[RMDB]
RNA sequence: GGGAACGACUCGAGUAGAGUCGAAAAUCAUGCAAAGUGCAUAUGCCGCCAGCGGGAUGGUGUGCAUUCUGUCCAUGGGAAACCGGGUUGAUGGUGGGCGCGUCAGCGAUACGAUCUGUGCACCCUGAACUUUCGAGUUAUUCGUAACUCGAAAGUUAAAAGAAACAACAACAACAAC
Reactivity to 2A3 in 0.01 (KOAc 150mM, MgCl2 10mM, bicine 150mM(pH8.5), 24C), signal-to-noise 2, nucleotides 027 to 126: u040c010a000u050g030c020a030a060a150g070u080g020c000a020u040a050u140g060c000c010g000c030c000a030g080c120g110g080g030a050u080g010g070u030g040u080g010c010a000u060u040c010u050g060u000c050c030a040u050g050g000g020a050a040a040c030c010g010g020g000u030u050g080a050u060g000g030u040g030g000g020c020g000c010g060u040c020a010g000c030g010a030u050a210c040g030a060u020c010u060g080u030g040c030a060c000c010c000u020g030
Reactivity to DMS in 0.01 (KOAc 150mM, MgCl2 10mM, bicine 150mM(pH8.5), 24C), signal-to-noise 4, nucleotides 027 to 126: u000c070a050u000g020c040a070a080a090g010u000g010c030a030u000a050u010g040c020c030g020c020c020a140g030c120g020g020g030a090u000g020g030u000g010u010g020c010a020u000u000c070u010g000u000c060c030a080u000g010g010g000a080a080a120c050c030g010g000g010u000u000g000a030u000g020g000u010g020g010g010c060g030c080g000u000c090a050g000c090g000a100u010a090c110g010a040u010c070u000g010u000g020c050a110c000c010c010u000g010
Overview
Structure probing data (2A3 and DMS) for a 177-nucleotide construct. The RNA was probed in 150 mM KOAc, 10 mM MgCl2 and 150 mM bicine (pH 8.5) at 24 C. The DMS profile rests on 4,942 reads.